[RMDB]
RNA sequence: GGGAACGACUCGAGUAGAGUCGAAAACGUCCAGAUCCUGCUGGUGGGAGAGCCGUGGCCCAGGCUCCUACAUUGCCUUGGGGAGGAGAGUCAGGCCCUGCAGGGAAGGGUUGUGAACCUGCUCUGGGUUGACUAGUGAGUUCGCUCACUAGUCAACAAAAGAAACAACAACAACAAC
Reactivity to 2A3 in 0.01 (KOAc 150mM, MgCl2 10mM, bicine 150mM(pH8.5), 24C), signal-to-noise 1, nucleotides 027 to 126: c040g040u000c000c020a010g010a140u070c000c000u030g070c000u070g050g050u060g040g090g010a110g000a010g000c020c020g090u090g050g010c000c000c020a020g000g040c000u020c000c000u090a110c040a170u230u240g050c020c020u070u060g020g010g020g000a030g040g020a070g000a030g050u080c020a010g040g080c000c030c010u010g000c000a000g100g020g000a040a050g050g000g050u100u120g070u050g080a040a030c000c010u030g030c020u060c030u070g120g000
Reactivity to DMS in 0.01 (KOAc 150mM, MgCl2 10mM, bicine 150mM(pH8.5), 24C), signal-to-noise 2, nucleotides 027 to 126: c130g000u010c000c020a080g000a120u020c040c010u010g030c040u010g010g020u010g000g000g010a070g000a090g030c000c030g000u010g000g000c020c010c020a300g000g000c010u000c030c010u000a040c070a070u010u020g010c050c080u000u000g000g010g010g010a110g030g010a100g000a090g000u000c080a110g000g010c030c040c010u000g020c000a030g000g010g010a100a090g010g000g010u000u000g010u010g000a090a130c020c010u010g000c050u000c030u000g010g010